[RMDB]
RNA sequence: GGGAACGACUCGAGUAGAGUCGAAAAUGACGCUGGAGAACGCCGACCUGUCGCUGCUAGGCAAGGCCCGCAAGGUCGUGGUCACCAAGGACGAGACCACCAUCGUCGAGGGCGCCGGUGACACCGAGACCGUAGGGGCAUUCGUGCCCCUACGGUCAAAAGAAACAACAACAACAAC
Reactivity to DMS in 0.01 (KOAc 150mM, MgCl2 10mM, bicine 150mM(pH8.5), 24C), signal-to-noise 2, nucleotides 027 to 126: u010g040a070c110g000c010u000g000g030a140g020a150a120c010g030c040c020g000a110c140c020u000g030u010c040g030c040u000g000c070u000a010g100g050c040a120a130g010g000c000c030c040g050c110a180a110g000g010u000c090g020u000g010g000u010c000a080c080c090a110a080g020g020a090c140g010a160g010a060c010c030a040c120c110a110u000c000g010u010c120g020a110g010g000g020c030g000c030c000g010g000u000g000a030c090a110c040c030g000a200
Reactivity to 2A3 in 0.01 (KOAc 150mM, MgCl2 10mM, bicine 150mM(pH8.5), 24C), signal-to-noise 2, nucleotides 027 to 126: u100g030a040c020g010c030u050g050g030a050g000a110a030c050g020c000c040g030a060c020c030u070g030u060c040g000c030u050g010c070u090a110g130g000c050a080a060g120g000c000c020c000g040c060a050a070g040g040u050c020g060u010g010g020u060c020a030c070c030a120a110g210g020a050c050g010a030g000a040c000c030a020c010c020a060u030c010g130u020c040g040a090g000g030g010c030g030c000c000g020g020u010g000a020c010a040c000c050g090a040
Source information:
The record gives the reactivity of an RNA of 177 nucleotides to DMS and 2A3. It was measured as part of the RMDB library OK2TST. For DMS the reverse transcriptase was MarathonRT. For 2A3 the reverse transcriptase was SuperScript II with manganese.